[RMDB]
RNA sequence: GGGAACGACUCGAGUAGAGUCGAAAAUAUUCUGGGCAUGAAAAUAAGUGCUCCAUCCGGGCAACGUCAGCAGAUCGCUGAGAAGCUUGAGAAGCAGACUAAGGAACAGCCAGUUGACCGCUACCACUCUGCAAGGUAGAUUCGUCUACCUUGCAGAAAAAGAAACAACAACAACAAC
Reactivity to 2A3 in 0.01 (KOAc 150mM, MgCl2 10mM, bicine 150mM(pH8.5), 24C), signal-to-noise 4, nucleotides 027 to 126: u210a090u070u070c040u060g030g000g000c010a040u050g130a010a040a110a090u290a250a050g020u040g030c010u000c030c000a060u020c010c030g000g020g000c020a080a030c040g130u020c000a000g000c000a030g060a300u230c160g030c000u020g010a000g050a080a000g010c000u090u110g060a110g030a210a000g020c030a030g020a080c070u130a110a030g050g000a080a020c020a020g040c000c010a010g030u080u070g050a020c010c010g000c020u080a030c010c040a030c030
Reactivity to DMS in 0.01 (KOAc 150mM, MgCl2 10mM, bicine 150mM(pH8.5), 24C), signal-to-noise 3, nucleotides 027 to 126: u050a070u040u000c080u000g020g000g000c040a020u000g000a050a210a120a070u010a090a200g000u000g010c010u020c040c140a100u000c060c020g030g000g000c010a040a170c090g010u010c030a040g020c020a170g010a250u010c220g000c020u020g000a130g010a090a140g000c070u000u040g000a100g010a120a200g010c090a110g010a040c030u010a080a080g000g010a030a060c180a020g000c000c000a100g010u010u000g000a140c020c000g030c000u000a170c080c070a010c060
An RNA of 177 nucleotides, treated with 2A3 and DMS and read out base by base.
For DMS, 2,438 sequencing reads were counted.
DMS adducts were read by reverse transcription with MarathonRT.
It was measured as part of the RMDB library OK1LIB.
2A3 is a SHAPE reagent: it acylates the 2'-hydroxyl of flexible nucleotides of all four kinds.
Conditions: 150 mM KOAc, 10 mM MgCl2 and 150 mM bicine (pH 8.5), 24 C.